[RMDB]
RNA sequence: GGGAACGACUCGAGUAGAGUCGAAAACUAUAAAAGAUGUAACAGAUGCAAACUGUAACACAAGGGCCAUUAACCCUUUCUCUGCCGGGCACACUCAGUCCCCACGCCCCACACCUAUUGUCUCCUGCUUCCAUCUUCCUUUCGAGGAAGAUGGAAGAAAAGAAACAACAACAACAAC
Reactivity to DMS in 0.01 (KOAc 150mM, MgCl2 10mM, bicine 150mM(pH8.5), 24C), signal-to-noise 1, nucleotides 027 to 126: c060u040a140u050a140a150a070a040g000a110u060g000u010a080a070c010a060g000a060u020g060c090a100a050a040c100u010g000u010a080a030c010a060c120a200a070g000g020g030c030c000a110u030u050a000a160c000c000c000u000u000u010c000u000c000u000g000c000c010g040g010g030c000a030c030a040c000u010c050a140g020u000c030c000c070c030a130c060g040c030c000c010c080a060c110a030c060c040u000a020u000u090g010u000c020u000c000c050u000g000
Reactivity to 2A3 in 0.01 (KOAc 150mM, MgCl2 10mM, bicine 150mM(pH8.5), 24C), signal-to-noise 4, nucleotides 027 to 126: c030u030a020u190a220a110a050a020g120a120u120g030u070a090a020c010a010g010a020u170g060c030a060a080a070c030u000g030u090a040a010c030a000c020a090a020g040g000g000c030c010a060u110u080a060a090c030c000c000u050u060u010c050u020c020u000g050c050c000g020g000g000c050a010c000a010c070u050c020a030g060u040c010c000c000c000a020c060g010c000c010c000c000a030c010a010c000c000u090a080u040u070g040u020c020u010c020c000u050g020
Source information
Chemical mapping of a 177-nucleotide RNA with DMS and 2A3. DMS (dimethyl sulfate) methylates the pairing face of unpaired adenines and cytosines. The reactions ran in a buffer of 150 mM KOAc, 10 mM MgCl2 and 150 mM bicine (pH 8.5), at 24 C.